[RMDB]
RNA sequence: GGGAACGACUCGAGUAGAGUCGAAAAAAGUGGCAGCAGCAAUCUCAGACAUACUUGAAUGAGUGUGCCGAAAUAACUGUCAAUACUGAAAAGAGAGGUAUUGUUAUCUGUGAAGGCAUGUACAGGCCACAGAGCGUAUGUUCGCAUACGCUCUGUGAAAAGAAACAACAACAACAAC
Reactivity to 2A3 in 0.01 (KOAc 150mM, MgCl2 10mM, bicine 150mM(pH8.5), 24C), signal-to-noise 3, nucleotides 027 to 126: a020a000g060u020g060g020c020a020g000c020a000g000c010a040a020u000c010u010c020a020g010a070c020a060u130a070c030u150u100g180a200a050u170g000a070g060u090g010u020g030c000c010g010a040a050a090u100a010a030c020u010g020u040c000a010a020u030a030c020u040g060a060a050a100a060g180a010g020a030g060g000u030a010u040u030g060u060u070a080u060c060u000g020u050g090a040a020g040g000c020a000u020g000u000a030c020a070g070g040c000
Reactivity to DMS in 0.01 (KOAc 150mM, MgCl2 10mM, bicine 150mM(pH8.5), 24C), signal-to-noise 4, nucleotides 027 to 126: a060a070g030u010g000g000c070a060g000c010a050g010c070a090a060u010c060u010c040a110g020a100c020a020u010a020c040u000u000g000a160a080u010g010a040g010u000g030u000g010c000c030g000a040a060a060u000a090a090c080u000g010u000c060a020a040u000a020c020u000g010a070a090a110a110g010a090g020a220g010g010u000a020u010u000g000u000u000a060u000c070u000g000u000g010a070a110g010g020c050a010u000g030u010a050c130a060g000g010c130
The data come from the RNA Mapping Database (RMDB), library OK2TST. Chemical mapping of a 177-nucleotide RNA with 2A3 and DMS. The RNA was probed in 150 mM KOAc, 10 mM MgCl2 and 150 mM bicine (pH 8.5) at 24 C. DMS (dimethyl sulfate) methylates the pairing face of unpaired adenines and cytosines. For 2A3 the reverse transcriptase was SuperScript II with manganese. DMS adducts were read by reverse transcription with MarathonRT.